[RMDB]
RNA sequence: GGGAACGACUCGAGUAGAGUCGAAAAGAAAGGCGCGCCUGACAUCUAAAUGGAGUUGCCGCCGCCUGUUGGCAGAGGCCCUCUUCCGUCGAGAUCCUGGGAGACGAUCGCGGUCAGUCCACAGAAAGGGUUUACAAAACUUCGGUUUUGUAAACCCAAAAGAAACAACAACAACAAC
Reactivity to 2A3 in 0.01 (KOAc 150mM, MgCl2 10mM, bicine 150mM(pH8.5), 24C), signal-to-noise 2, nucleotides 027 to 126: g070a020a060a000g010g000c000g000c040g050c030c020u100g050a110c060a120u080c070u200a100a160a150u230g060g000a090g040u020u040g020c020c000g010c020c000g060c000c000u100g020u060u100g000g040c040a010g010a020g130g000c000c000c020u040c000u080u070c030c000g090u090c010g000a000g000a100u040c050c000u040g040g000g000a090g000a000c020g010a030u080c040g000c010g040g000u040c000a000g040u070c010c040a080c000a100g130a070a020a000
Reactivity to DMS in 0.01 (KOAc 150mM, MgCl2 10mM, bicine 150mM(pH8.5), 24C), signal-to-noise 2, nucleotides 027 to 126: g000a110a070a040g000g000c020g010c050g020c070c040u000g010a060c050a020u000c090u000a100a140a060u060g000g000a060g040u000u040g000c170c000g010c020c070g000c030c020u020g000u020u000g010g000c040a050g000a070g000g020c010c090c010u020c010u000u020c080c040g010u010c030g010a050g000a020u010c060c010u000g020g000g070a160g020a070c140g000a020u010c110g000c060g000g020u040c000a100g000u000c030c030a130c060a110g010a100a110a100